Structure probing data (DMS) for a 177-nucleotide construct. The DMS profile rests on 1,002 reads. Source: RMDB library OK2TST, as collected in RNAgym. Conditions: 150 mM KOAc, 10 mM MgCl2 and 150 mM bicine (pH 8.5), 24 C.
RNA sequence: GGGAACGACUCGAGUAGAGUCGAAAAGGCGUGACAGAAUCCAAAGAGUCGGACGAAGAAACGGGCGUCGUCAUGCGCGACAGGAUAGGGGAAGGACCGCGUUCAGGUGGCUUUGGCCUCUGCCGCAGUAUGAUCUCUCCUUCGGGAGAGAUCAUACAAAAGAAACAACAACAACAAC
Reactivity to DMS in 0.01 (KOAc 150mM, MgCl2 10mM, bicine 150mM(pH8.5), 24C), signal-to-noise 2, nucleotides 027 to 126: g020g000c060g040u010g000a110c010a090g010a070a100u000c010c050a110a120a120g010a280g000u000c020g030g000a080c040g030a070a130g020a050a090a100c040g000g010g000c060g040u000c050g020u020c060a070u000g010c160g020c000g000a090c040a120g010g010a110u000a070g020g010g000g000a110a100g000g000a070c090c070g000c100g000u000u010c030a020g020g000u020g020g000c010u000u000u010g020g000c020c000u000c010u000g000c300c070g000c020a100